An RNA of 207 nucleotides, treated with DMS and 2A3 and read out base by base. Conditions: 150 mM KOAc, 10 mM MgCl2 and 150 mM bicine (pH 8.5), 24 C. Reactivities are given for positions 27 through 156. The DMS profile rests on 10,061 reads.

RNA sequence: GGGAACGACUCGAGUAGAGUCGAAAACAGAGAGGACUUUCCUGUUUUGAGCUUCAUCUGGGUUCAAUCGAAGUACUCUUGGGAGUGUUAAAGGAGCAUUGACUUCUUAGCUGGCUGGCUUCCUGGUGGAAUUCUUCCUGGCAGAAUGUACCUUGGAUAUGGCUAAUUUAUUCGUAAAUUAGCCAUAAAAAGAAACAACAACAACAAC
Reactivity to DMS in 0.01 (KOAc 150mM, MgCl2 10mM, bicine 150mM(pH8.5), 24C), signal-to-noise 3, nucleotides 027 to 156: c030a150g000a060g000a040g010g010a070c040u000u000u010c040c040u020g030u000u010u000u010g010a060g020c020u000u010c080a160u010c150u010g020g020g010u000u010c020a050a090u010c060g010a070a030g040u000a040c020u000c010u000u000g010g010g010a070g010u000g010u000u000a040a050a050g010g010a080g050c010a150u000u010g010a090c020u010u000c020u000u000a090g010c040u000g020g020c040u000g020g000c030u000u010c030c020u000g020g010u000g020g000a070a120u000u000c020u000u000c020c010u010g020g000c050a110g010a100a070u000g010u000a070c040c010u000u000g010g010a260
Reactivity to 2A3 in 0.01 (KOAc 150mM, MgCl2 10mM, bicine 150mM(pH8.5), 24C), signal-to-noise 3, nucleotides 027 to 156: c010a020g060a010g010a010g080g080a030c010u090u120u040c030c030u020g050u060u010u040u050g010a020g000c010u190u140c060a150u080c120u170g020g030g020u050u060c030a030a040u050c040g020a030a010g060u020a050c010u010c000u050u040g030g060g030a040g020u070g020u070u150a050a070a050g040g000a010g030c070a120u090u170g080a170c010u020u000c000u070u050a020g010c020u010g050g000c010u020g040g010c000u060u030c020c000u010g000g020u040g010g050a040a040u050u040c000u070u030c000c010u020g040g000c030a010g040a110a010u060g000u090a100c000c010u010u110g060g010a060